[RMDB]
An RNA of 207 nucleotides, treated with 2A3 and DMS and read out base by base. The reactions ran in a buffer of 150 mM KOAc, 10 mM MgCl2 and 150 mM bicine (pH 8.5), at 24 C. For 2A3, 923 sequencing reads were counted.
RNA sequence: GGGAACGACUCGAGUAGAGUCGAAAAACAAGUGGUGGUAGUCCGCCACUCUAAGGGAACGCCUUUAGAAGAAGAGGCUAGGGGGUAUUCCGGUGUGGGAUACUUAGUAAUAUGCAACGCUAAUUGCUCAAGGAUAGAUGAUUCGUCAUCUAUCCAACUAAAAGGUUUGUUUCGACAAACCUUUUAGAAAAGAAACAACAACAACAAC
Reactivity to 2A3 in 0.01 (KOAc 150mM, MgCl2 10mM, bicine 150mM(pH8.5), 24C), signal-to-noise 2, nucleotides 027 to 156: a000c170a170a050g000u010g000g000u030g010g050u010a000g000u020c000c000g000c010c010a000c010u000c010u010a010a010g030g000g030a090a160c030g250c010c010u020u020u020a060g000a080a000g050a030a000g050a070g010g010c000u000a020g020g000g000g000g010u000a020u060u040c020c030g200g030u250g090u260g200g030g000a000u000a030c000u010u050a010g040u100a020a100u110a040u300g030c050a060a000c080g020c160u120a130a110u090u090g040c010u070c220a120a140g000g000a000u000a000g000a000u000g000a010u020u110c260g040u010c050a010u020c000u000a000u040c000c000a010a000
Reactivity to DMS in 0.01 (KOAc 150mM, MgCl2 10mM, bicine 150mM(pH8.5), 24C), signal-to-noise 1, nucleotides 027 to 156: a100c040a080a100g010u010g010g040u000g030g000u010a080g000u000c000c010g010c010c000a010c020u000c030u000a020a060g020g040g000a180a200c260g030c000c000u000u020u000a040g000a130a160g010a040a070g040a080g030g000c020u000a080g010g020g000g030g010u000a030u000u000c010c010g070g010u000g000u030g020g000g020a010u000a000c010u010u020a110g020u020a080a140u000a100u010g000c040a040a130c080g010c060u020a090a160u000u010g000c010u000c080a060a220g010g030a040u010a010g030a040u000g000a060u000u000c250g000u000c010a000u010c000u000a000u000c000c000a000a090